[RMDB]
RNA sequence: GGGAACGACUCGAGUAGAGUCGAAAAGAACAUUUAUAAUCUCACAACAUUACUGUAUCAUCAAGCUAUAUAAUCACUACAUAUCGACACACAUAUAAUUAUGAUUAGUAAAGAAAACGUAGGAUCACGUUCCAGAUUAAUUCGUUAAUCUGGAACGAAAAGAAACAACAACAACAAC
Reactivity to 2A3 in 0.01 (KOAc 150mM, MgCl2 10mM, bicine 150mM(pH8.5), 24C), signal-to-noise 5, nucleotides 027 to 126: g020a060a010c010a020u020u170u050a250u090a080a090u030c010u020c030a040c000a080a100c030a040u030u140a060c050u060g050u090a050u050c010a020u000c040a080a000g050c060u030a020u030a010u050a250a080u060c040a030c100u060a020c030a050u110a030u070c040g060a010c000a010c010a000c020a080u040a000u040a200a150u220u070a030u050g020a050u040u090a020g010u050a060a070a040g050a030a130a010a010c050g020u020a050g020g050a030u080c050a010
Reactivity to DMS in 0.01 (KOAc 150mM, MgCl2 10mM, bicine 150mM(pH8.5), 24C), signal-to-noise 5, nucleotides 027 to 126: g000a140a110c090a070u010u010u000a090u010a080a110u000c020u000c030a080c070a060a100c050a140u010u000a020c050u000g000u000a020u000c050a040u000c080a060a040g000c090u000a040u000a070u010a060a070u010c030a070c070u010a070c100a040u010a090u010c050g010a100c120a070c110a100c070a050u000a020u010a060a090u000u000a050u000g000a060u000u020a060g000u000a030a040a090g010a060a050a030a080c140g010u010a080g010g000a070u000c150a120
Structure probing data (2A3 and DMS) for a 177-nucleotide construct.
It was measured as part of the RMDB library OK2TST.
Reactivities are given for positions 27 through 126.
High 2A3 reactivity points to a flexible backbone, as in loops and unpaired stretches.
The reactions ran in a buffer of 150 mM KOAc, 10 mM MgCl2 and 150 mM bicine (pH 8.5), at 24 C.